Chemical mapping of a 177-nucleotide RNA with DMS and 2A3. The RNA was probed in 150 mM KOAc, 10 mM MgCl2 and 150 mM bicine (pH 8.5) at 24 C. Source: RMDB library OK1LIB, as collected in RNAgym.
[RMDB]
RNA sequence: GGGAACGACUCGAGUAGAGUCGAAAAGAAGAGAAUAGCGGUGUAAGUGCAGCCCGUCUUACACCGUAAGGCACAGCGGAAACGCUGAUGUUAAAUACAGGGCUGCGAGACGGAAGUAGACCGUCAAGCUGGUAAAUGACUUCGGUCAUUUACCAGCAAAAGAAACAACAACAACAAC
Reactivity to DMS in 0.01 (KOAc 150mM, MgCl2 10mM, bicine 150mM(pH8.5), 24C), signal-to-noise 1, nucleotides 027 to 126: g000a060a000g050a220g020a240a110u040a130g000c000g040g000u050g020u050a010a010g000u000g010c000a050g020c000c000c000g000u000c000u000u000a000c020a000c090c010g000u000a020a060g100g000c030a010c000a000g000c020g000g000a120a100a110c030g030c010u000g000a070u000g020u030u030a160a110a090u030a070c160a120g050g000g000c010u000g000c020g000a050g010a000c000g050g000a100a110g000u010a050g000a210c000c000g000u000c030a090a060
Reactivity to 2A3 in 0.01 (KOAc 150mM, MgCl2 10mM, bicine 150mM(pH8.5), 24C), signal-to-noise 5, nucleotides 027 to 126: g130a050a010g100a010g060a060a140u130a080g010c000g010g000u000g000u010a000a000g010u030g080c010a000g000c010c010c000g000u030c000u000u000a000c000a000c010c000g000u020a020a070g050g000c010a000c000a020g000c010g030g030a080a100a000c010g000c000u010g010a060u000g000u010u150a040a070a000u290a040c100a050g000g000g000c000u010g000c040g020a140g000a000c000g010g000a160a050g070u150a060g060a050c000c000g000u010c030a010a010